[RMDB]
RNA sequence: GGGAACGACUCGAGUAGAGUCGAAAAACAAGCUGCACGUGCGUGCGAGCAGUUUUCGAAAUCCCACGUUUCACGUAAAGACGCAACUCUACUCGAGAAAGCGAGUCACGCAGACAGCGUCAAGGAACACACUGUGUGGGUUCGCCCACACAGUGUGAAAAGAAACAACAACAACAAC
Reactivity to DMS in 0.01 (KOAc 150mM, MgCl2 10mM, bicine 150mM(pH8.5), 24C), signal-to-noise 2, nucleotides 027 to 126: a000c020a020a010g000c000u010g020c000a010c000g020u000g020c150g060u010g000c010g000a030g010c030a080g000u000u000u000u000c000g000a040a130a050u010c010c020c030a190c090g000u000u000u000c050a060c280g000u020a020a080a050g000a030c020g010c040a120a110c050u000c000u000a020c000u000c000g010a000g000a090a070a040g000c030g010a100g000u020c110a120c010g040c080a140g000a030c160a120g010c040g000u000c050a070a120g000g010a120a170
Reactivity to 2A3 in 0.01 (KOAc 150mM, MgCl2 10mM, bicine 150mM(pH8.5), 24C), signal-to-noise 1, nucleotides 027 to 126: a000c000a040a000g020c020u050g030c020a000c080g250u300g230c150g030u030g040c000g040a000g040c020a000g000u010u000u050u010c080g040a070a070a020u070c010c040c000a020c050g020u080u090u050c160a150c090g110u180a280a000a000g040a000c040g000c040a030a080c010u000c000u010a020c000u000c000g010a000g000a040a010a000g050c020g050a070g140u050c010a020c130g000c040a000g050a120c080a030g000c020g000u000c040a060a080g140g030a060a030